[RMDB]
RNA sequence: GGGAACGACUCGAGUAGAGUCGAAAACAUGAAAUUCUCCAGGAUGAUAAGAAGUGCGAGCUGAUUGUGGUUAUCGACUGCCACAUGACUUCAUCGGCGAAAUAUGCUGACAUCCUGCUGCCUGACAGGCUGGCGUAUUAUUCGUAAUACGCCAGCCAAAAGAAACAACAACAACAAC
Reactivity to 2A3 in 0.01 (KOAc 150mM, MgCl2 10mM, bicine 150mM(pH8.5), 24C), signal-to-noise 1, nucleotides 027 to 126: c070a090u120g090a060a000a050u020u010c000u000c030c000a000g000g000a010u020g010a020u070a300a060g040a010a000g030u040g110c090g130a140g000c060u010g040a110u070u000g030u020g000g080u020u140a050u150c030g120a050c070u040g000c010c000a080c010a020u050g050a020c010u000u020c000a030u000c000g010g000c010g030a200a130a050u290a050u120g010c010u010g020a010c000a020u000c020c000u030g030c000u060g020c000c000u060g110a120c030a040
Reactivity to DMS in 0.01 (KOAc 150mM, MgCl2 10mM, bicine 150mM(pH8.5), 24C), signal-to-noise 1, nucleotides 027 to 126: c210a130u000g010a040a070a290u000u010c000u000c050c090a040g000g020a080u000g000a210u000a130a030g000a090a030g020u000g010c090g010a170g020c020u010g000a050u000u000g030u000g000g000u000u010a300u000c090g000a080c150u000g030c040c120a000c020a040u000g000a090c090u000u000c030a050u000c030g010g000c040g030a090a010a200u000a060u010g060c010u020g000a130c010a010u000c020c010u020g030c000u000g010c090c050u000g000a120c300a030